[RMDB]
RNA sequence: GGGAACGACUCGAGUAGAGUCGAAAAUUGGCUUAGAAGCAGCCACCAUUUAAAAAAUGCGUAAUAGCUUACUCAUCGAGUGAUCCUGCGCCGAAAAUGAUUGGCGAUCAAGCGUUAUACCGAAGCUGAAUAUGUAUCGAUUCGUCGAUACAUAUUCAAAAGAAACAACAACAACAAC
Reactivity to 2A3 in 0.01 (KOAc 150mM, MgCl2 10mM, bicine 150mM(pH8.5), 24C), signal-to-noise 9, nucleotides 027 to 126: u060u050g030g000c010u040u040a090g030a160a020g090c070a010g030c010c000a010c010c010a050u050u090u210a120a160a050a030a020a020u120g010c030g020u030a050a070u080a160g010c010u010u020a040c010u010c050a140u080c090g020a000g020u020g020a060u020c010c000u040g010c010g000c010c030g090a070a070a010a030u150g040a150u050u070g010g000c000g000a020u040c030a040a010g030c030g040u090u090a090u070a140c040c050g050a050a010g040c040u020
Reactivity to DMS in 0.01 (KOAc 150mM, MgCl2 10mM, bicine 150mM(pH8.5), 24C), signal-to-noise 6, nucleotides 027 to 126: u040u010g010g010c010u010u010a090g000a090a080g020c150a120g000c020c030a050c170c030a030u010u000u000a000a020a080a100a080a050u010g000c090g010u000a030a040u040a170g000c100u010u000a030c030u000c030a130u020c090g010a020g010u000g010a070u000c030c050u000g010c010g010c010c040g000a030a060a060a050u020g010a040u010u010g020g000c010g010a080u010c090a030a080g000c040g010u010u010a080u030a120c050c030g010a070a090g020c120u000

Structure probing data (2A3 and DMS) for a 177-nucleotide construct.
The RNA was probed in 150 mM KOAc, 10 mM MgCl2 and 150 mM bicine (pH 8.5) at 24 C.
Reactivities are given for positions 27 through 126.